[RMDB]
RNA sequence: GGGAACGACUCGAGUAGAGUCGAAAAGUAAAUACUUUCGAGUAUUUACAAAGAACGCUGCAACGCGCAGCGCGCUCGCGAGACCACGCCGCAGCAAAAUAAAAACUGCUGGAUUCGUCCAGCAGAAGGACAUAAAGCUAUUCGUAGCUUUAUGUCCAAAAGAAACAACAACAACAAC
Reactivity to DMS in 0.01 (KOAc 150mM, MgCl2 10mM, bicine 150mM(pH8.5), 24C), signal-to-noise 2, nucleotides 027 to 126: g020u000a020a010a010u000a010c000u010u000u020c110g030a030g000u000a010u000u000u000a000c000a060a080a090g000a090a160c040g010c010u000g010c000a140a090c140g040c220g010c020a030g000c000g020c100g000c040u020c090g020c020g000a030g010a130c020c020a060c090g020c080c020g000c020a030g010c010a150a050a140a050u010a080a060a090a180a050c000u000g000c000u000g020g000a030u000u020c190g010u000c000c000a030g030c000a030g010a050a060
Reactivity to 2A3 in 0.01 (KOAc 150mM, MgCl2 10mM, bicine 150mM(pH8.5), 24C), signal-to-noise 4, nucleotides 027 to 126: g000u010a000a010a010u000a010c010u040u060u150c170g030a000g000u010a000u000u000u000a010c000a000a100a010g080a080a020c030g000c010u020g000c020a210a160c180g080c030g000c190a010g010c000g020c030g010c010u050c090g000c000g020a030g020a070c000c020a040c030g030c020c020g010c010a020g010c020a040a050a060a040u160a030a100a030a000a050c010u010g000c000u000g000g010a020u020u040c150g050u010c050c000a000g000c000a000g010a000a010